[RMDB]
RNA sequence: GGGAACGACUCGAGUAGAGUCGAAAAGCCUAAGCGUUCGCGCUUAGGCAAAGAAACCGAAAACGCAACGCCAACGGAAAGGCGAAUUCCGAACAACCAUAAAAAGUUGCCUCUUCGGAGGCAACAACCGUAACAAUAUCUUCGGAUAUUGUUACGGAAAAGAAACAACAACAACAAC
Reactivity to 2A3 in 0.01 (KOAc 150mM, MgCl2 10mM, bicine 150mM(pH8.5), 24C), signal-to-noise 4, nucleotides 027 to 126: g000c000c000u000a010a000g010c010g020u040u130c200g020c000g020c110u000u000a000g000g000c000a010a000a010g000a050a040a010c040c030g000a070a040a020a020c080g010c050a090a040c050g030c020c020a060a050c020g020g050a070a030a010g020g000c070g040a090a080u070u010c000c000g020a020a010c010a040a020c030c050a040u180a170a140a010a020a020g010u010u010g000c000c000u000c010u040u050c210g080g000a000g000g000c000a000a000c000a010a000
Reactivity to DMS in 0.01 (KOAc 150mM, MgCl2 10mM, bicine 150mM(pH8.5), 24C), signal-to-noise 3, nucleotides 027 to 126: g010c000c000u000a010a020g010c000g040u000u000c230g030c020g030c000u000u020a010g000g010c000a000a030a060g010a130a130a210c020c000g000a040a040a090a100c090g000c030a080a040c110g010c040c150a060a100c010g030g000a030a030a060g010g000c030g010a090a110u000u010c020c000g010a140a080c040a030a020c040c140a110u040a010a070a090a080a050g010u000u000g000c000c000u000c000u000u010c190g000g000a020g010g010c000a020a000c000a020a080